Overview: An RNA of 207 nucleotides, treated with DMS and 2A3 and read out base by base. DMS adducts were read by reverse transcription with MarathonRT. For 2A3, 3,886 sequencing reads were counted. Values cover nucleotides 27 to 156. The RNA was probed in 150 mM KOAc, 10 mM MgCl2 and 150 mM bicine (pH 8.5) at 24 C. DMS (dimethyl sulfate) methylates the pairing face of unpaired adenines and cytosines. The DMS profile rests on 2,560 reads.

RNA sequence: GGGAACGACUCGAGUAGAGUCGAAAAUAGCGAAGUAGGAUUUUAUGCGUCAAGUGUUCACAGGCUGGGGAGUCGCCGUCAAACGAAAAGCAGAAAGCGUGCUGCUUACGAUAUAAUUUCCGCACCCAUAAGAAGUCUCUGUUCGCAGAGACUUCAAGUUAACAUGGCAGUUCGCUGCCAUGUUAACAAAAGAAACAACAACAACAAC
Reactivity to DMS in 0.01 (KOAc 150mM, MgCl2 10mM, bicine 150mM(pH8.5), 24C), signal-to-noise 1, nucleotides 027 to 156: u000a130g000c070g020a070a060g000u010a050g000g010a110u010u000u000u010a020u030g010c020g080u000c040a080a180g040u040g010u000u000c020a110c040a070g000g030c030u000g000g000g000g000a080g030u000c040g010c020c020g030u000c060a040a010a130c110g030a070a060a070a080g000c010a010g000a070a090a150g000c060g010u000g010c030u000g000c010u000u000a080c010g010a070u010a040u010a060a130u000u000u000c040c040g000c070a130c020c030c000a140u010a070a130g000a000a030g000u000c000u000c030u000g000u000u020c260g010c020a000g020a010g010a000c000u000u010c000a010a080
Reactivity to 2A3 in 0.01 (KOAc 150mM, MgCl2 10mM, bicine 150mM(pH8.5), 24C), signal-to-noise 4, nucleotides 027 to 156: u110a010g020c030g030a050a000g040u090a050g030g040a050u030u040u060u070a060u140g030c020g000u030c040a050a040g030u020g040u180u100c060a050c010a050g060g000c020u040g030g020g000g000a050g030u050c020g010c020c010g070u070c020a070a040a010c030g080a080a050a040a010g010c020a020g090a080a120a010g060c060g040u050g010c020u010g000c010u030u020a030c020g020a000u000a010u010a180a060u060u040u000c010c010g010c020a050c000c030c000a030u070a130a050g000a000a000g000u000c000u000c000u010g030u020u030c170g020c090a000g000a000g000a000c000u000u000c000a000a000